Source: RMDB library TTRINS, as collected in RNAgym.
Structure probing data (2A3 and DMS) for a 177-nucleotide construct.
Reactivities are given for positions 27 through 126.
For DMS the reverse transcriptase was MarathonRT.
The DMS profile rests on 6,376 reads.
[RMDB]
RNA sequence: GGGAACGACUCGAGUAGAGUCGAAAAGAUAUGGACCAUAGGGAGCCUUGAGAGGCGAUGAGAUAAGCGUCGGAAACGACGCUUAUCGAGCCUCAAGAUGAGGGCGAAGAACUAUGGUCCUAAGUCACAUUAGCUCAAAGUUCGCUUUGAGCUAAUGAAAAGAAACAACAACAACAAC
Reactivity to 2A3 in 0.01 (KOAc 150mM, MgCl2 10mM, bicine 150mM(pH8.5), 24C), signal-to-noise 2, nucleotides 027 to 126: g030a010u070a050u080g000g020a000c000c000a010u000a000g060g050g010a140g060c030c080u230u140g270a190g010a010g190g000c050g230a300u100g080a050g000a000u000a000a000g000c010g000u010c000g030g000a000a060a000c000g000a000c020g000c000u000u000a000u000c000g010a000g000c000c010u010c000a000a020g250a050u300g260a110g190g030g010c040g150a240a030g010a070a040c000u020a000u020g010g000u000c000c000u000a010a000g000u010c000a000
Reactivity to DMS in 0.01 (KOAc 150mM, MgCl2 10mM, bicine 150mM(pH8.5), 24C), signal-to-noise 5, nucleotides 027 to 126: g010a020u000a180u010g000g010a020c000c010a020u000a010g010g000g010a170g010c010c000u000u010g010a290g010a030g010g020c010g000a090u010g010a270g010a010u000a000a010g020c010g020u000c000g010g000a040a040a110c010g010a010c000g020c000u000u000a000u000c000g010a090g030c000c000u010c010a070a130g020a240u010g020a150g000g010g020c010g020a130a110g000a140a170c000u000a010u000g000g010u000c000c000u000a000a070g010u010c020a300